This 207-nucleotide RNA was probed chemically with 2A3 and DMS.
2A3 adducts were read by reverse transcription with SuperScript II with manganese.
High 2A3 reactivity points to a flexible backbone, as in loops and unpaired stretches.
It was measured as part of the RMDB library M2RFPK.
RNA sequence: GGGAACGACUCGAGUAGAGUCGAAAAAGAGGAGGCUGGGUUUUGCGAUCUUUAAGCAGAUGGCAGGUUCACACCGUACGGUGCGGAAGUUCGCGCUUCCGUGAAACGCGAAAAUCGGACGGUGGCUAAGACCAAUAACAGUUCGCUGUUAUUGGAAUCUACAAGAACCGUUCGCGGUUCUUGUAGAAAAAGAAACAACAACAACAAC
Reactivity to 2A3 in 0.01 (KOAc 150mM, MgCl2 10mM, bicine 150mM(pH8.5), 24C), signal-to-noise 2, nucleotides 027 to 156: a000g040a020g040g000a060g030g000c050u030g030g020g070u000u080u120u060g020c020g020a020u070c060u060u130u110a060a030g040c040a010g000a040u030g030g020c030a020g010g030u070u070c050a010c020a000c040c000g010u030a000c040g010g000u030g020c020g000g000a010a000g000u050u180c060g020c020g000c080u000u000c020c000g000u020g080a120a140a020c160g030c060g080a110a080a010a030u030c000g000g020a000c000g000g010u010g030g000c010u050a060a020g010a030c000c000a000a000u000a000a000c000a000g020u060u080c180g020c110u010g000u000u000a000u000u010g000g000a010a050
Reactivity to DMS in 0.01 (KOAc 150mM, MgCl2 10mM, bicine 150mM(pH8.5), 24C), signal-to-noise 1, nucleotides 027 to 156: a100g000a100g000g020a080g040g030c020u000g000g030g050u010u010u000u000g020c020g010a110u000c040u020u000u010a100a150g060c110a080g000a050u010g020g010c010a070g010g010u000u000c020a190c000a000c000c010g000u010a000c010g020g030u010g000c040g000g030a070a110g020u000u000c210g030c200g000c010u010u000c020c150g020u010g030a030a030a040c060g000c040g000a060a050a130a060u010c010g000g010a030c040g010g010u000g010g030c060u010a040a150g000a230c010c010a020a040u000a000a020c020a040g010u000u000c300g040c010u010g040u000u010a010u000u000g000g000a030a070